[RMDB]
RNA sequence: GGGAACGACUCGAGUAGAGUCGAAAAUUGCGUUGCUGGGGUAUCGAUCUGAAUGAUCAGACGAUAAAUCAGCGCCGCGCUCACGAAGGCUCCGUUACUAAUAACUUAGCAACGGUUGAUCUCUCAGCGGCAAGCGAUUCUAUAUCUCUUGCCCUCUCAGUGAAAAGGUCUUCGGACCUUUUCACUGAAAAGAAACAACAACAACAAC
Reactivity to 2A3 in 0.01 (KOAc 150mM, MgCl2 10mM, bicine 150mM(pH8.5), 24C), signal-to-noise 1, nucleotides 027 to 156: u190u100g000c000g010u000u020g030c000u000g030g010g010g000u000a010u000c010g040a160u050c010u000g070a130a190u300g080a300u180c000a000g010a010c000g000a000u000a000a010a030u000c010a000g050c000g000c000c000g000c010g030c000u070c010a130c070g030a140a000g040g000c020u000c000c000g000u000u000a000c020u000a020a140u150a280a080c170u060u030a010g010c010a000a020c030g080g000u100u020g100a190u020c010u000c000u010c030a040g000c030g060g020c000a000a000g000c020g010a000u120u000c140u120a130u090a020u230c000u040c000u020u010g000c000c000c000u020c000u020
An RNA of 207 nucleotides, treated with 2A3 and read out base by base. It was measured as part of the RMDB library PDB130. For 2A3, 680 sequencing reads were counted. For 2A3 the reverse transcriptase was SuperScript II with manganese. The reactions ran in a buffer of 150 mM KOAc, 10 mM MgCl2 and 150 mM bicine (pH 8.5), at 24 C.